[RMDB]
RNA sequence: GGGAACGACUCGAGUAGAGUCGAAAACGCCUUCAUCGCGUGAGCGGCGUGUACCUGAAGCGGACAUCUUGCCAAACGAAAUGCUGACCGAGAUACCCUGAAGUAGCUUGCUAAUAGUGGCGAUGUCCGAGAUGGACGAGUUCGCUCGUCCAUCUCGAAAAGAAACAACAACAACAAC
Reactivity to 2A3 in 0.01 (KOAc 150mM, MgCl2 10mM, bicine 150mM(pH8.5), 24C), signal-to-noise 5, nucleotides 027 to 126: c010g000c000c000u040u030c050a180u070c050g090c050g190u100g060a030g010c120g010g000c010g010u040g040u070a130c000c010u030g070a080a020g050c030g030g010a010c000a000u000c010u100u190g010c000c000a100a090a020c050g110a040a080a020u110g020c020u030g090a080c000c040g030a050g020a050u150a100c010c000c060u070g030a070a020g000u020a010g010c020u020u140g040c060u060a080a070u050a240g060u020g020g000c020g020a030u000g000u000c010
Reactivity to DMS in 0.01 (KOAc 150mM, MgCl2 10mM, bicine 150mM(pH8.5), 24C), signal-to-noise 4, nucleotides 027 to 126: c020g020c010c000u000u010c090a100u000c190g000c210g010u000g000a030g020c270g020g000c010g000u000g010u030a070c030c010u000g010a180a140g010c060g000g000a010c010a000u000c020u020u030g050c010c010a030a100a070c170g010a110a090a090u060g020c020u010g000a060c040c020g000a180g000a100u010a070c040c020c030u000g000a230a160g020u010a060g010c000u000u010g010c130u010a070a090u010a130g010u000g000g000c000g000a040u010g000u010c010

This 177-nucleotide RNA was probed chemically with 2A3 and DMS. 2A3 adducts were read by reverse transcription with SuperScript II with manganese. It was measured as part of the RMDB libraries RFM100 and RFMREP.